[RMDB]
RNA sequence: GGGAACGACUCGAGUAGAGUCGAAAAGAUAUGGAAGCACUACCCACCACCUCGACGCAUGAACUACGCUGUAGUGUCGGAAACGACAUGAGGGCGCAUGCGUCGAGGUGAGGUGCUUCCUAAGUCAGCUAAUAAGGUCGUUCGCGACCUUAUUAGCAAAAGAAACAACAACAACAAC
Reactivity to 2A3 in 0.01 (KOAc 150mM, MgCl2 10mM, bicine 150mM(pH8.5), 24C), signal-to-noise 1, nucleotides 027 to 126: g180a060u300a170u300g020g010a010a030g000c010a020c030u210a300c040c030c000a040c000c010a000c010c000u000c000g020a000c020g040c030a070u010g020a200a180c120u260a070c300g030c140u290g000u060a030g020u010g000u000c000g020g070a050a010a010c000g000a020c010a010u050g000a240g030g040g000c010g050c000a000u020g000c020g000u010c000g010a020g000g000u000g000a000g000g000u000g000c000u000u000c000c000u000a000a000g130u060c170a020
Reactivity to DMS in 0.01 (KOAc 150mM, MgCl2 10mM, bicine 150mM(pH8.5), 24C), signal-to-noise 2, nucleotides 027 to 126: g000a120u000a120u000g000g010a050a080g000c000a050c000u020a160c000c010c020a300c140c000a040c000c000u000c010g010a020c010g040c000a000u000g010a050a120c180u000a300c000g000c020u040g000u010a300g000u000g010u000c000g080g000a080a030a270c000g000a020c000a000u000g020a240g000g000g000c000g000c010a010u000g000c010g000u010c000g000a000g000g010u000g020a020g010g000u000g030c020u000u000c000c000u000a020a090g000u000c250a090